An RNA of 207 nucleotides, treated with 2A3 and read out base by base. 2A3 adducts were read by reverse transcription with SuperScript II with manganese. The reactions ran in a buffer of 150 mM KOAc, 10 mM MgCl2 and 150 mM bicine (pH 8.5), at 24 C. Source: RMDB library VIROID, as collected in RNAgym.
RNA sequence: GGGAACGACUCGAGUAGAGUCGAAAAUGACUCUCGCGCUUCCCCUGCCGCUGCUCUGAGGAUCCGUCUCUGCGCCGCUAGUCGUGCGGACUAAUGGUGCUCUCCAACGCCCUAAGUCUAAUAAAAUCUCCUAGGGAGUGGAGACCUCAGGGUAAAAGUGUGUUACUACGUUCGCGUAGUAACACACAAAAGAAACAACAACAACAAC
Reactivity to 2A3 in 0.01 (KOAc 150mM, MgCl2 10mM, bicine 150mM(pH8.5), 24C), signal-to-noise 1, nucleotides 027 to 156: u150g000a000c000u020c000u010c050g000c000g010c210u020u010c030c000c000c050u050g110c050c080g080c000u080g000c010u000c000u000g000a000g000g050a170u120c140c060g160u020c070u030c070u250g000c060g000c020c000g050c060u000a010g000u080c050g170u200g180c140g020g010a000c030u060a000a030u050g000g000u010g010c000u000c000u000c050c000a070a040c060g020c000c070c000u040a100a000g000u050c090u030a030a060u170a060a270a030a160u180c030u120c040c010u000a000g010g040g000a020g070u030g000g000a000g000a000c000c000u000c000a000g000g000g000u010a030a030a000a000